[RMDB]
RNA sequence: GGGAACGACUCGAGUAGAGUCGAAAACACAUGAGCAGCUGCAGUACCCAGACUGAGGAGAUGUGACAUCCACAUUAACAUUUGAAGGUGUCGUGGGACUUUGAUAUUCCACCCGCAGACAAUAGGCAGUAUGAAACACCUUCGGGUGUUUCAUACUAAAAGAAACAACAACAACAAC
Reactivity to DMS in 0.01 (KOAc 150mM, MgCl2 10mM, bicine 150mM(pH8.5), 24C), signal-to-noise 2, nucleotides 027 to 126: c070a100c190a090u010g000a110g000c050a020g000c000u000g000c060a070g000u000a130c030c040c000a090g010a110c070u000g010a140g010g050a140g020a080u000g040u000g020a100c110a070u000c010c030a020c040a070u000u000a060a080c080a090u010u000u000g020a070a100g000g020u000g000u000c040g070u000g000g000g000a060c100u000u000u020g030a080u010a180u000u000c010c030a070c000c010c050g000c080a070g000a070c070a020a020u000a030g020g000c140
Reactivity to 2A3 in 0.01 (KOAc 150mM, MgCl2 10mM, bicine 150mM(pH8.5), 24C), signal-to-noise 1, nucleotides 027 to 126: c040a010c010a060u130g040a000g000c020a000g000c070u030g000c040a010g040u090a080c000c000c090a000g030a040c030u040g010a020g090g000a080g060a070u030g000u060g110a040c030a100u110c030c030a040c040a040u070u120a190a010c020a060u140u190u250g080a160a010g000g040u010g000u030c040g090u040g010g010g010a030c050u260u070u110g040a050u040a060u220u030c010c010a020c000c020c010g070c060a030g020a150c020a050a050u040a040g060g000c010